[RMDB]
RNA sequence: GGGAACGACUCGAGUAGAGUCGAAAAAUACAGCGUAAUCGAGCGGAGGAAAACGGCACUCCGAAAAUCCGGUACGAUUAUGAUCCCAGUGCGUCGACGCUAGAUGCAGAACCGGAUUGCCGAGGAAUUCACUUAGAAACUUCGGUUUCUAAGUGAAAAAAGAAACAACAACAACAAC
Reactivity to 2A3 in 0.01 (KOAc 150mM, MgCl2 10mM, bicine 150mM(pH8.5), 24C), signal-to-noise 2, nucleotides 027 to 126: a000u190a010c060a040g030c010g010u030a020a060u050c020g000a060g100c020g060g050a050g050g090a080a100a030a110c020g030g000c030a010c040u000c020c000g010a100a000a000a020u010c010c020g020g050u060a050c030g020a020u030u080a030u170g090a020u020c020c010c000a010g050u050g030c010g060u020c020g050a070c090g020c160u070a020g010a040u030g010c020a020g030a060a030c020c000g000g010a020u000u030g000c020c010g010a020g010g100a020a110
Reactivity to DMS in 0.01 (KOAc 150mM, MgCl2 10mM, bicine 150mM(pH8.5), 24C), signal-to-noise 3, nucleotides 027 to 126: a100u010a130c200a090g030c030g010u000a050a030u010c010g000a160g020c010g000g000a060g010g000a070a030a100a120c060g000g010c080a060c080u000c000c000g010a060a050a060a060u000c000c000g020g000u000a090c040g000a020u000u010a030u000g000a100u010c010c000c010a110g010u010g020c020g000u000c010g000a090c200g000c140u010a050g000a060u000g020c020a070g000a080a080c130c010g000g010a020u000u000g020c070c040g010a140g010g000a090a120